[RMDB]
RNA sequence: GGGAACGACUCGAGUAGAGUCGAAAACAAGGAAGAUCCGUGAGCUCCUAAAAAAGGGAAAUUCGCUGUACUCCAAAGUCAGUGAUAAGGUUUUCCAAUGCCUGAGGGACACUAACUCACGGCUUGGAGGGACUCCCCUAUUCGUAGGGGAGUCCCUAAAAGAAACAACAACAACAAC
Reactivity to 2A3 in 0.01 (KOAc 150mM, MgCl2 10mM, bicine 150mM(pH8.5), 24C), signal-to-noise 1, nucleotides 027 to 126: c040a000a000g230g000a060a000g040a080u040c000c000g000u080g000a000g000c020u020c050c000u080a070a070a000a000a000a000g060g000g000a040a040a040u050u120c000g020c040u020g160u140a000c000u180c110c000a140a000a000g010u000c020a000g000u000g060a040u130a120a070g020g000u090u000u030u070c000c190a020a090u100g150c000c040u040g000a130g010g000g000a000c030a040c260u060a200a000c000u000c000a000c010g000g020c000u000u020g010g000
An RNA of 177 nucleotides, treated with 2A3 and read out base by base. The RNA was probed in 150 mM KOAc, 10 mM MgCl2 and 150 mM bicine (pH 8.5) at 24 C. Reactivities are given for positions 27 through 126. The data come from the RNA Mapping Database (RMDB), library OK1LIB. For 2A3 the reverse transcriptase was SuperScript II with manganese.